Source information: Structure probing data (2A3 and DMS) for a 177-nucleotide construct. For 2A3 the reverse transcriptase was SuperScript II with manganese.

[RMDB]
RNA sequence: GGGAACGACUCGAGUAGAGUCGAAAAUUGGAAUCUGACUGGGACUACUUCUGGGCAACCGGAGGCGGACUCGGACGGAAUCUGAUCGUAACGUCUUUGGCAGGAUUGCUUUACCGCUUUCCGUCUGAUUUACAUGAGAAUUCGUUCUCAUGUAAAUAAAAGAAACAACAACAACAAC
Reactivity to 2A3 in 0.01 (KOAc 150mM, MgCl2 10mM, bicine 150mM(pH8.5), 24C), signal-to-noise 9, nucleotides 027 to 126: u030u030g030g010a020a040u010c010u010g030a040c010u010g010g000g030a020c010u020a010c000u040u000c010u020g020g000g000c040a070a100c010c000g010g000a000g010g000c020g020g010a030c000u000c000g000g010a010c010g010g010a010a030u000c010u020g020a030u050c060g090u110a060a090c050g080u020c050u090u080u080g080g000c110a140g030g040a060u010u040g010c010u090u080u080a090c040c040g000c010u020u010u000c010c010g020u000c030u040g050
Reactivity to DMS in 0.01 (KOAc 150mM, MgCl2 10mM, bicine 150mM(pH8.5), 24C), signal-to-noise 9, nucleotides 027 to 126: u000u010g000g010a040a050u000c010u000g010a080c020u010g000g000g010a110c020u000a090c010u000u000c010u000g010g010g000c300a110a150c010c000g010g000a020g000g020c030g010g000a070c020u000c010g010g010a070c010g010g000a020a070u000c010u000g000a010u000c110g010u010a080a110c180g010u000c040u000u010u000g000g000c050a120g030g000a020u000u000g000c020u000u000u030a120c290c180g000c030u000u000u000c010c000g010u000c030u010g000